[RMDB]
Chemical mapping of a 177-nucleotide RNA with 2A3 and DMS. The RNA was probed in 150 mM KOAc, 10 mM MgCl2 and 150 mM bicine (pH 8.5) at 24 C. It was measured as part of the RMDB library OK1LIB. Values cover nucleotides 27 to 126. 2A3 is a SHAPE reagent: it acylates the 2'-hydroxyl of flexible nucleotides of all four kinds.

RNA sequence: GGGAACGACUCGAGUAGAGUCGAAAAUACGAGUGUAGCGGAGCUGCUGUCGCGCCGCCUCGUCUCGAUGUCUGCGGUCACGAUCUCCGCAGGUUACGGCCGCUGCUGUGCCCGCAGUCGCCCGCGACUGCUUAAGGUGAUUCGUCACCUUAAGCAGAAAAGAAACAACAACAACAAC
Reactivity to 2A3 in 0.01 (KOAc 150mM, MgCl2 10mM, bicine 150mM(pH8.5), 24C), signal-to-noise 9, nucleotides 027 to 126: u200a030c040g010a020g050u120g040u180a020g020c010g000g020a050g010c040u090g020c060u090g200u250c090g000c020g000c020c010g010c010c010u020c010g090u020c010u010c030g080a070u100g040u010c010u010g000c010g010g010u030c040a040c150g080a190u050c080u040c100c030g010c020a030g010g010u040u080a060c100g070g000c010c010g030c060u040g000c020u060g010u030g020c010c010c010g000c000a010g010u030c030g020c010c010c000g040c030g050a060
Reactivity to DMS in 0.01 (KOAc 150mM, MgCl2 10mM, bicine 150mM(pH8.5), 24C), signal-to-noise 9, nucleotides 027 to 126: u030a080c050g000a030g020u030g010u010a100g010c010g000g000a100g010c050u020g010c090u010g010u020c150g000c040g020c010c020g000c020c010u000c030g000u010c020u000c010g000a120u020g000u010c010u000g010c010g000g010u010c040a060c070g010a100u020c100u020c090c100g010c020a060g010g010u010u020a110c120g010g010c020c030g000c040u000g000c070u020g000u010g000c050c010c040g000c020a020g000u000c100g010c010c000c000g010c120g010a220